[RMDB]
RNA sequence: GGGAACGACUCGAGUAGAGUCGAAAACUCCCCGUGGCUCCAGCCAGACCCUAGAGGUCAGCCUUGCGGACCAACAGGAGGACUCCCAGCUUUCCCUUUUCAAGAGGUCCCCAGACACCGGCCACCCCUAUUGUAUAAUCUUCGGAUUAUACAAUAGAAAAGAAACAACAACAACAAC
Reactivity to DMS in 0.01 (KOAc 150mM, MgCl2 10mM, bicine 150mM(pH8.5), 24C), signal-to-noise 5, nucleotides 027 to 126: c120u010c010c010c010c120g040u000g000g010c020u000c050c040a120g010c040c050a130g000a090c040c010c020u000a100g010a300g010g000u000c030a080g010c040c090u000u000g030c080g020g000a060c040c020a060a200c130a080g000g010a050g020g010a110c080u010c010c010c010a140g000c070u010u000u000c030c010c000u000u000u000u010c100a070a160g000a110g010g010u000c010c020c020c030a100g010a080c060a050c060c030g000g010c030c030a090c030c020c040
Reactivity to 2A3 in 0.01 (KOAc 150mM, MgCl2 10mM, bicine 150mM(pH8.5), 24C), signal-to-noise 2, nucleotides 027 to 126: c020u030c010c000c010c010g060u020g030g020c050u030c060c000a030g030c000c010a040g030a060c000c000c040u090a130g040a130g100g000u030c030a000g010c020c060u050u160g030c070g020g010a020c020c000a030a070c010a040g020g000a020g030g030a040c010u000c010c030c000a030g010c050u080u070u080c020c010c000u100u120u050u160c080a080a040g040a030g060g060u010c000c010c000c010a000g020a010c030a010c000c000g010g030c030c010a020c000c020c000
An RNA of 177 nucleotides, treated with DMS and 2A3 and read out base by base.